[RMDB]
RNA sequence: GGGAACGACUCGAGUAGAGUCGAAAAGAUAUGGACUACGUAGAGCAACAGCUACUGAUCGGAAACGAUCAGGUAGACAUGCUUGAGGUAGUCCUAAGUCAAAGAGUGCAAGUUCGCUUGCACUCAAGCAAGCAACAAUGUUCGCAUUGUUGCUUGCAAAAGAAACAACAACAACAAC
Reactivity to 2A3 in 0.01 (KOAc 150mM, MgCl2 10mM, bicine 150mM(pH8.5), 24C), signal-to-noise 1, nucleotides 027 to 126: g020a000u000a030u060g000g000a000c010u040a010c030g210u150a050g000a000g100c110a110a150c040a180g000c000u020a020c000u000g030a010u000c020g000g000a010a010a060c010g020a000u010c040a000g040g040u020a010g000a030c050a220u300g000c050u030u030g050a040g020g040u010a010g000u000c000c000u000a010a010g000u000c000a000a110a140g000a000g000u010g000c040a030a000g020u100u130c250g200c180u000u000g010c000a000c010u010c000a000a010
Reactivity to DMS in 0.01 (KOAc 150mM, MgCl2 10mM, bicine 150mM(pH8.5), 24C), signal-to-noise 2, nucleotides 027 to 126: g020a000u000a300u030g000g020a020c000u000a000c000g000u000a300g030a010g000c010a060a050c300a150g030c010u000a000c000u000g010a010u000c000g020g000a070a040a130c000g000a030u020c010a000g020g000u000a000g040a050c060a250u000g020c010u000u000g010a240g000g000u000a010g000u010c000c000u000a000a070g000u010c020a080a120a170g020a030g020u000g020c020a010a010g000u000u020c280g000c010u010u000g000c010a000c000u000c000a010a080